[RMDB]
RNA sequence: GGGAACGACUCGAGUAGAGUCGAAAAAAAAGAUAUGGAUUCGGUAGCUCUUGGAUUUAUCACGAAAGAUAGUCGGAAACGACUAUCUUUCUGUGAUUGUCAGAGUGUACGAAUCCUAAGUCAAAAACAUGAGUUAAUGCUUCGGCAUUAACUCAUGAAAAGAAACAACAACAACAAC
Reactivity to DMS in 0.01 (KOAc 150mM, MgCl2 10mM, bicine 150mM(pH8.5), 24C), signal-to-noise 1, nucleotides 027 to 126: a050a020a080a060g000a020u010a300u000g000g000a010u000u000c000g000g000u010a300g000c000u000c000u010u010g030g030a070u020u010u000a000u000c010a000c010g000a010a020a010g010a010u000a010g010u000c010g030g000a120a130a140c000g000a020c000u000a000u000c000u000u000u000c010u000g080u000g040a000u000u000g010u010c010a020g000a010g000u010g000u000a230c000g000a010a000u000c000c010u010a060a060g000u020c000a050a090a130a160a140